[RMDB]
RNA sequence: GGGAACGACUCGAGUAGAGUCGAAAAAGCCAUUUGGCUGCUGUUUUUACAUUUAUACCAUUAUCUUCAUCCUAAAUAGGAAUUCUGAUAGUAUUGUUGGCAGAAUAGGGUCAACUGGAACACACAUUUUUGUUCUCUAGGUAAAGAUGAUGAAACACUAUGGUGAGCAGUUCGCUGCUCACCAUAGAAAAGAAACAACAACAACAAC
Reactivity to 2A3 in 0.01 (KOAc 150mM, MgCl2 10mM, bicine 150mM(pH8.5), 24C), signal-to-noise 2, nucleotides 027 to 156: a010g030c040c010a080u180u040u180g000g000c030u040g040c000u000g050u050u010u000u060u080a020c030a070u120u180u070a060u060a040c020c020a020u090u090a010u000c000u000u010c000a080u140c030c020u090a100a130a250u120a150g040g010a000a000u200u000c020u090g070a080u020a040g070u020a110u180u140g060u020u020g020g040c010a010g120a220a170u080a110g160g010g030u000c000a000a000c110u060g000g070a080a000c140a000c000a000c010a080u010u070u000u030u160g080u040u000c050u000c030u060a070g070g000u040a030a070a000g020a000u020g030a010u070g020a030a010a060c110a000